This 207-nucleotide RNA was probed chemically with 2A3 and DMS. Conditions: 150 mM KOAc, 10 mM MgCl2 and 150 mM bicine (pH 8.5), 24 C. As a SHAPE reagent, 2A3 marks flexible, mostly unpaired nucleotides at the ribose 2'-OH. For DMS the reverse transcriptase was MarathonRT. The DMS profile rests on 2,465 reads.

[RMDB]
RNA sequence: GGGAACGACUCGAGUAGAGUCGAAAAGGCCACUUCUUAGAGUUGGGGUGGUAGGUGGUUGCUUAGAUGAUGUUUGGGCCUCAGCCUGGUGCUAAUGGGGAUGGGGACUAGGUGAACAGAAAGGAAGGCUGGUGGAGAGAUGAGGAAGGAGAGAAGGGAUAGUAUAGGAUUUCGAUCCUAUACUAUCAAAAGAAACAACAACAACAAC
Reactivity to 2A3 in 0.01 (KOAc 150mM, MgCl2 10mM, bicine 150mM(pH8.5), 24C), signal-to-noise 4, nucleotides 027 to 156: g070g000c010c000a040c030u070u050c040u070u140a070g020a070g090u130u070g020g000g020g000u040g030g030u050a070g030g030u040g030g000u020u070g000c020u030u070a060g010a100u140g010a030u070g100u060u070u070g070g000g010c000c020u040c020a020g010c010c020u040g000g050u080g020c030u060a080a070u130g010g000g000g000a030u070g020g010g010g010a020c020u020a020g040g010u050g030a040a020c030a040g080a070a030a010g040g020a030a010g020g010c060u030g000g060u050g010g030a040g000a010g010a020u080g010a010g030g010a020a030g030g010a030g000a010g010a020a030g040g030
Reactivity to DMS in 0.01 (KOAc 150mM, MgCl2 10mM, bicine 150mM(pH8.5), 24C), signal-to-noise 1, nucleotides 027 to 156: g000g030c020c020a060c020u000u010c030u000u000a180g010a120g030u000u000g000g010g000g000u000g000g010u000a030g010g030u010g010g010u030u000g010c030u000u000a120g010a110u000g020a080u000g000u010u010u010g010g010g040c050c020u010c060a090g010c040c020u000g030g020u000g000c060u000a030a130u020g020g010g010g010a090u000g010g020g000g010a080c010u000a050g020g000u000g010a110a180c030a080g000a040a000a130g040g000a060a050g050g010c030u000g000g050u000g010g000a100g030a120g030a000u000g020a070g040g040a030a070g000g020a170g030a080g010a090a080g010g000